[RMDB]
RNA sequence: GGGAACGACUCGAGUAGAGUCGAAAAAGCGUAUGCUGCAAGAAGCAGUAGAUGCAUUGCUGGAUAACGGCCGUCGUGGUCGUGCGAUUACCGGCUCUAACAAGCGUCCGUUGAAGUCACUGGCUGACCGGGUAACCUGAUUCGUCAGGUUACCCGGAAAAGAAACAACAACAACAAC
Reactivity to DMS in 0.01 (KOAc 150mM, MgCl2 10mM, bicine 150mM(pH8.5), 24C), signal-to-noise 1, nucleotides 027 to 126: a080g020c030g030u000a050u000g020c010u000g000c020a110a080g000a180a100g000c000a010g000u000a060g000a090u000g000c000a090u000u000g000c030u000g000g010a070u040a130a080c040g020g010c000c010g000u000c240g020u000g020g000u000c020g030u000g000c070g020a110u000u000a050c090c010g010g000c040u000c030u020a030a090c070a060a130g020c100g000u030c020c030g010u000u000g000a070a080g010u000c000a090c110u000g000g020c070u000g010a200